[RMDB]
RNA sequence: GGGAACGACUCGAGUAGAGUCGAAAAAAAAAAGAUAUGGAAGCCUCGAUGUGACAUGCCAGACGAAGGGUCGGAAACGACCUGACGGUAUGGCAACAGCACAUCGAGGGCUUCCUAAGUCAAAAAACGUAUUAUAUUCGUUCGCGAAUAUAAUACGAAAAGAAACAACAACAACAAC
Reactivity to DMS in 0.01 (KOAc 150mM, MgCl2 10mM, bicine 150mM(pH8.5), 24C), signal-to-noise 3, nucleotides 027 to 126: a020a090a090a110a120a060g030a130u010a300u010g010g010a010a030g000c010c000u010c000g000a020u000g000u000g000a070c070a220u000g020c010c000a010g010a130c070g020a070a300g010g000g000u020c000g000g010a140a100a180c000g010a000c010c000u000g010a240c000g020g000u000a120u000g010g010c010a020a030c230a060g010c010a000c010a000u010c000g010a030g010g010g030c000u010u000c000c000u020a010a080g000u030c040a020a050a130a080a080a110
Reactivity to 2A3 in 0.01 (KOAc 150mM, MgCl2 10mM, bicine 150mM(pH8.5), 24C), signal-to-noise 2, nucleotides 027 to 126: a000a000a000a000a000a010g090a050u170a060u170g020g000a020a000g020c030c000u000c010g000a000u000g000u000g010a110c020a110u060g010c000c000a010g000a040c000g010a030a010g000g010g020u020c020g010g040a070a100a050c010g000a000c000c000u010g010a000c000g020g090u300a040u030g000g020c020a010a000c020a020g030c000a000c000a000u010c000g000a000g000g010g010c000u000u000c000c000u000a010a020g030u030c040a000a060a000a200a040a090